Notes
This 170-nucleotide RNA was probed chemically with DMS and 2A3. 2A3 adducts were read by reverse transcription with SuperScript II with manganese. It was measured as part of the RMDB library 15KLIB.

RNA sequence: GGGAACGACUCGAGUAGAGUCGAAAAUCUUGUUAGAUUUGGCAGGAUUGUUCAGAAUCUUUCUCCGCAAUGCCUAUGUGUACACUUCACAAGGGUUUGUGGUGGUCAAUGGCAAAGUUUCUACACUGGAUCUAAGGCUUCGGCCUUAGAAAAAGAAACAACAACAACAAC
Reactivity to DMS in 0.01 (KOAc 150mM, MgCl2 10mM, bicine 150mM(pH8.5), 24C), signal-to-noise 6, nucleotides 027 to 129: u030c010u030u020g010u000u000a000g000a080u030u060u020g010g000c000a000g000g030a040u030u020g050u040u010c140a100g000a030a110u000c010u010u030u030c020u000c000c050g040c000a050a030u020g050c000c000u030a180u030g000u050g040u000a160c180a120c220u020u010c000a030c020a100a300g000g040g060u010u040u020g020u040g040g010u010g040g060u000c070a020a050u030g010g050c120a010a020a040g000u000u000u000c030u040a070c070a110c070u030g010g000a270
Reactivity to 2A3 in 0.01 (KOAc 150mM, MgCl2 10mM, bicine 150mM(pH8.5), 24C), signal-to-noise 8, nucleotides 027 to 129: u020c010u000u030g050u020u050a130g010a300u130u080u160g020g000c000a000g010g030a030u020u020g090u160u160c050a040g050a060a060u020c000u030u070u040c080u040c020c010g010c030a020a040u190g120c000c000u100a190u100g040u000g000u060a070c110a070c230u070u100c040a020c010a040a120g000g000g010u000u000u000g030u020g000g020u020g010g040u040c030a040a080u010g030g030c020a080a050a050g000u030u010u000c010u030a030c070a050c090u060g040g020a000
The RNA was probed in 150 mM KOAc, 10 mM MgCl2 and 150 mM bicine (pH 8.5) at 24 C. The 2A3 profile rests on 13,170 reads.